[RMDB]
RNA sequence: GGGAACGACUCGAGUAGAGUCGAAAAGAAAGUGCUUAAACCGUGUGGACACGAAUGGCUAUAACCACCGAAACCUGAGGAAACAGGAAGCCACAACGCAAGCCAUGUGGUUGGCACACGGAAGAAACACCUAUGCUGGGUUCGCCCAGCAUAGGUGAAAAGAAACAACAACAACAAC
Reactivity to 2A3 in 0.01 (KOAc 150mM, MgCl2 10mM, bicine 150mM(pH8.5), 24C), signal-to-noise 3, nucleotides 027 to 126: g060a020a090a000g030u070g030c010u040u060a100a000a040c020c000g000u010g000u010g000g100a030c030a000c080g090a030a050u070g000g000c020u040a010u040a300a000c030c070a040c040c000g060a150a090a020c010c030u010g000a030g060g220a200a060a030c030a000g020g000a060a010g000c000c030a040c040a190a060c050g020c070a110a030g020c020c000a010u000g010u010g030g030u010u070g020g000c020a010c020a000c010g050g050a060a040g020a010a150a000
Reactivity to DMS in 0.01 (KOAc 150mM, MgCl2 10mM, bicine 150mM(pH8.5), 24C), signal-to-noise 2, nucleotides 027 to 126: g040a040a100a030g000u000g000c020u020u010a110a030a140c000c000g020u010g010u000g000g000a150c000a150c000g000a090a180u060g000g020c000u000a070u000a000a160c140c020a090c070c080g030a030a060a130c040c040u000g040a120g020g020a080a090a210c020a050g000g000a070a000g070c010c010a080c100a160a010c060g010c060a060a010g000c000c030a000u000g030u000g000g000u000u030g000g000c000a010c020a040c070g010g000a080a070g000a090a140a080
This 177-nucleotide RNA was probed chemically with 2A3 and DMS. The DMS profile rests on 2,175 reads. The 2A3 profile rests on 1,937 reads.